[RMDB]
RNA sequence: GGGAACGACUCGAGUAGAGUCGAAAAGGUGCAGGCGGGAAGGAAUGUGCCUAGCGGGUGUGGCGAGGAGUGUAGCCAGCUGUGGGUUUUUCUUGGGGCCCAGAGAGACAUGGGCAGAGAUGGCCGCGGAAUAGUUAGAGUUCGCUCUAACUAUUCCAAAAGAAACAACAACAACAAC
Reactivity to 2A3 in 0.01 (KOAc 150mM, MgCl2 10mM, bicine 150mM(pH8.5), 24C), signal-to-noise 2, nucleotides 027 to 126: g080g010u080g040c030a010g010g040c060g010g010g070a060a040g050g010a110a070u090g030u040g020c000c030u030a020g010c040g040g020g010u100g030u070g020g020c020g000a060g030g040a080g050u070g010u070a010g040c030c020a020g000c050u050g010u100g050g000g000u020u040u020u090u040c030u050u110g030g020g100g000c000c010c000a010g020a000g010a000g000a040c030a090u050g020g000g000c010a010g010a010g010a020u040g040g040c020c010g000c050
Reactivity to DMS in 0.01 (KOAc 150mM, MgCl2 10mM, bicine 150mM(pH8.5), 24C), signal-to-noise 3, nucleotides 027 to 126: g010g020u000g000c070a050g010g000c070g010g000g010a080a100g010g010a100a070u000g020u010g010c030c030u000a100g030c100g010g010g000u000g030u010g010g010c060g000a090g030g000a080g020u000g020u010a100g020c030c030a080g010c060u020g020u010g010g000g010u000u000u010u010u000c050u020u010g000g000g010g000c000c010c040a040g020a100g010a140g000a100c170a100u000g000g000g020c010a100g000a070g010a080u000g000g010c030c050g020c210